Chemical mapping of a 177-nucleotide RNA with 2A3. Values cover nucleotides 27 to 126. The 2A3 profile rests on 235 reads. The reactions ran in a buffer of 150 mM KOAc, 10 mM MgCl2 and 150 mM bicine (pH 8.5), at 24 C. 2A3 adducts were read by reverse transcription with SuperScript II with manganese.
[RMDB]
RNA sequence: GGGAACGACUCGAGUAGAGUCGAAAAUUCAACGACUUGAGUCAGAGAAGGCAAAGUUGUCUUCUGAUAACUCAAAGUUGUCUUCUGAUAACUCAAAGUUGUCUUCUGAACUUUCAAUGGUUAAAACAGCAACAGGGAGAUUCGUCUCCCUGUUGCUAAAAGAAACAACAACAACAAC
Reactivity to 2A3 in 0.01 (KOAc 150mM, MgCl2 10mM, bicine 150mM(pH8.5), 24C), signal-to-noise 1, nucleotides 027 to 126: u000u000c000a020a020c020g150a100c000u000u050g020a000g050u080c020a000g000a000g050a300a000g000g000c000a000a000a270g020u120u020g080u020c000u060u000c000u220g260a290u020a000a020c060u060c250a000a060a140g070u000u000g000u030c000u010u010c000u080g290a300u000a300a000c000u000c040a020a020a000g000u000u000g000u050c000u060u040c000u150g110a000a000c000u020u060u170c260a160a070u300g030g000u200u130a110a110a000a000c020